[RMDB]
RNA sequence: GGGAACGACUCGAGUAGAGUCGAAAAUAAACCUGCGAGUGAGACGUUAAAAAAACUUCCACUGGCAAAACGCAGGCCAACAGUAACACUCCAGAGACAGAUUAGAAGUAAAGUAUAUUUUGAAGGAGCAUACCUCUAUAUUCGUAUAGAGGUAUGCAAAAGAAACAACAACAACAAC
Reactivity to 2A3 in 0.01 (KOAc 150mM, MgCl2 10mM, bicine 150mM(pH8.5), 24C), signal-to-noise 6, nucleotides 027 to 126: u060a020a040a010c000c000u010g000c030g040a000g010u040g010a230g000a070c030g000u010u000a120a230a030a040a000a020a010c020u010u000c000c000a000c010u040g120g040c060a050a020a000a070c030g010c010a010g020g010c000c000a070a040c050a070g070u100a070a010c020a010c050u010c010c000a010g030a000g030a100c040a020g090a090u060u180a050g100a230a000g050u140a070a050a030g070u060a140u050a100u240u130u070u100g090a090a060g050g050a040
Reactivity to DMS in 0.01 (KOAc 150mM, MgCl2 10mM, bicine 150mM(pH8.5), 24C), signal-to-noise 4, nucleotides 027 to 126: u020a030a120a160c030c010u000g000c020g010a030g020u000g000a140g000a010c070g000u000u010a000a020a110a140a050a030a030c020u020u000c010c010a000c010u010g010g030c120a080a030a070a290c050g000c030a010g010g020c050c050a050a050c080a100g000u010a040a040c080a080c050u010c030c020a060g020a120g000a060c080a050g000a080u030u020a060g010a070a120g000u010a030a060a090g030u000a030u010a070u010u000u010u000g000a110a100g000g000a180